Chemical mapping of a 177-nucleotide RNA with 2A3 and DMS. For 2A3 the reverse transcriptase was SuperScript II with manganese. The DMS profile rests on 1,426 reads. The reactions ran in a buffer of 150 mM KOAc, 10 mM MgCl2 and 150 mM bicine (pH 8.5), at 24 C.

[RMDB]
RNA sequence: GGGAACGACUCGAGUAGAGUCGAAAAACAAACGCUCCGCCGAGGUGGUGCACAUUGAUCUGGGGGUGGCGUUUGAGCAGGGCCGGUUCCUGAACACGCCCGAGCUGGUGCCCUUCCGCCUCACCCGAUGUACCGUAGGUUUCGACCUACGGUACAUAAAAGAAACAACAACAACAAC
Reactivity to 2A3 in 0.01 (KOAc 150mM, MgCl2 10mM, bicine 150mM(pH8.5), 24C), signal-to-noise 1, nucleotides 027 to 126: a000c030a000a120a010c020g050c020u010c010c020g000c030c000g090a080g110g050u020g100g010u080g000c100a050c000a180u130u250g090a110u160c120u150g010g000g030g000g000u040g000g000c000g030u000u040u160g030a040g000c090a030g000g010g020c020c000g100g030u080u050c020c050u070g080a120a020c040a040c070g120c000c030c000g010a020g000c020u080g090g160u200g000c000c010c050u000u000c030c000g020c010c000u000c020a080c000c000c000g050
Reactivity to DMS in 0.01 (KOAc 150mM, MgCl2 10mM, bicine 150mM(pH8.5), 24C), signal-to-noise 2, nucleotides 027 to 126: a100c040a010a050a050c100g010c020u000c050c020g020c060c030g030a090g050g020u000g020g010u000g020c110a070c110a080u000u010g010a040u000c060u020g030g020g030g020g040u000g010g000c030g020u000u010u000g010a050g000c060a120g020g000g000c050c040g000g000u000u000c030c020u000g000a120a080c170a080c200g020c050c020c050g020a070g000c020u000g020g000u000g020c040c050c020u000u030c020c030g000c020c010u000c060a070c010c020c030g010